[RMDB]
The record gives the reactivity of an RNA of 177 nucleotides to DMS and 2A3. DMS (dimethyl sulfate) methylates the pairing face of unpaired adenines and cytosines. For DMS the reverse transcriptase was MarathonRT. Conditions: 150 mM KOAc, 10 mM MgCl2 and 150 mM bicine (pH 8.5), 24 C.
RNA sequence: GGGAACGACUCGAGUAGAGUCGAAAAGGGGCAGUUGGACCGUACCGAGAACCGACACAGGUGCCCUGGGUGAGUAGCCUAAGGCGUGGCGGAACAUUCCGGCCGAGGGAAUUCGGCAAGUUGGCCCCUUUGUUACGUCCUUCGGGACGUAACAAAGAAAAGAAACAACAACAACAAC
Reactivity to DMS in 0.01 (KOAc 150mM, MgCl2 10mM, bicine 150mM(pH8.5), 24C), signal-to-noise 4, nucleotides 027 to 126: g000g010g000g020c010a070g000u000u020g000g020a160c040c060g000u040a180c050c020g000a160g000a180a120c010c000g000a090c080a080c020a160g010g030u040g000c010c000c080u000g010g000g020u000g000a190g000u060a200g010c000c000u000a040a070g000g000c000g030u010g000g000c030g000g010a080a190c100a210u030u010c010c000g010g010c030c010g010a080g000g000g010a140a150u010u010c020g000g000c050a110a050g010u000u040g030g000c000c000c000
Reactivity to 2A3 in 0.01 (KOAc 150mM, MgCl2 10mM, bicine 150mM(pH8.5), 24C), signal-to-noise 2, nucleotides 027 to 126: g040g000g020g000c020a080g040u150u100g050g030a020c040c050g000u030a100c000c000g000a040g000a090a010c000c000g040a000c040a020c000a050g060g120u220g010c000c000c000u000g020g030g000u090g000a140g050u210a030g000c000c000u100a110a020g040g000c000g000u010g000g010c000g000g000a050a040c020a140u100u120c000c000g030g010c020c010g010a040g010g030g030a090a140u090u000c010g000g000c010a040a010g030u080u070g100g010c000c000c000